[RMDB]
RNA sequence: GGGAACGACUCGAGUAGAGUCGAAAAACGCAUAGGUUACGACCUAUGCGAAGCUGGCAAGGAUGAUAAAUACUUGCCCUCACUUAGAUAAUAGUUCAUUGAUGAGAGCAUUGUUCUGAGCCAGUAAAUUGACUUGACCUUUCGAGGUCAAGUCAAUAAAAGAAACAACAACAACAAC
Reactivity to 2A3 in 0.01 (KOAc 150mM, MgCl2 10mM, bicine 150mM(pH8.5), 24C), signal-to-noise 4, nucleotides 027 to 126: a000c000g010c000a000u000a010g020g030u060u050a050c200g040a010c050c000u000a000u000g000c000g000a010a030g000c000u000g000g000c010a000a000g030g020a010u070g030a030u140a130a150a000u200a130c070u020u040g020c000c000c000u000c000a020c000u050u080a000g030a050u050a160a110u140a270g260u210u090c030a060u080u200g070a230u030g000a140g000a000g030c030a040u010u050g060u120u000c010u010g010a010g020c000c000a010g040u060a030a050
Reactivity to DMS in 0.01 (KOAc 150mM, MgCl2 10mM, bicine 150mM(pH8.5), 24C), signal-to-noise 2, nucleotides 027 to 126: a100c010g000c000a000u000a010g000g020u010u020a090c190g050a000c000c010u000a000u000g130c000g000a010a030g010c000u000g000g010c010a070a300g010g000a020u000g000a100u000a140a150a040u070a180c150u000u000g000c000c000c020u000c020a000c010u000u020a170g000a080u000a080a160u030a150g010u000u000c050a290u050u000g000a100u000g010a000g000a030g000c000a030u000u000g050u010u000c000u000g000a300g010c000c000a000g000u000a010a070